[RMDB]
Structure probing data (DMS and 2A3) for a 177-nucleotide construct.
High DMS reactivity at an A or C suggests that its Watson-Crick edge is free.
The reactions ran in a buffer of 150 mM KOAc, 10 mM MgCl2 and 150 mM bicine (pH 8.5), at 24 C.
The DMS profile rests on 1,050 reads.
RNA sequence: GGGAACGACUCGAGUAGAGUCGAAAACGAGGAGGUCAUUGCCGCCAACCCCAAGACCUUCUUCCAGGUCUACUGGCAGGGCGGGCGCGACGCGCUCGCUGAACGCGUCGAACGGGCGCGGCAGGCCAGAUAACGUGCCUUUCGAGGCACGUUAUCUAAAAGAAACAACAACAACAAC
Reactivity to DMS in 0.01 (KOAc 150mM, MgCl2 10mM, bicine 150mM(pH8.5), 24C), signal-to-noise 1, nucleotides 027 to 126: c060g010a190g020g010a130g000g040u000c010a070u030u000g050c000c000g030c000c070a080a120c050c000c000c030a060a170g000a040c000c010u000u000c020u020u000c040c040a030g010g000u030c160u000a200c040u000g010g000c160a080g000g040g000c030g020g000g000c000g000c000g000a160c170g010c010g020c000u000c000g000c040u000g020a020a060c160g000c160g020u000c010g010a070a180c290g000g000g010c040g010c010g020g020c020a050g000g000c020c040
Reactivity to 2A3 in 0.01 (KOAc 150mM, MgCl2 10mM, bicine 150mM(pH8.5), 24C), signal-to-noise 1, nucleotides 027 to 126: c060g020a200g090g060a070g020g000u020c050a210u040u230g000c000c020g030c010c000a040a020c000c030c030c020a020a010g000a010c020c000u060u140c010u050u020c010c010a020g000g070u110c100u250a190c030u150g000g020c020a040g070g030g000c090g020g010g000c020g020c030g230a210c200g000c010g000c000u020c020g050c010u040g050a060a040c070g060c140g040u010c010g000a020a030c030g010g000g000c070g020c000g010g030c000a010g000g030c000c010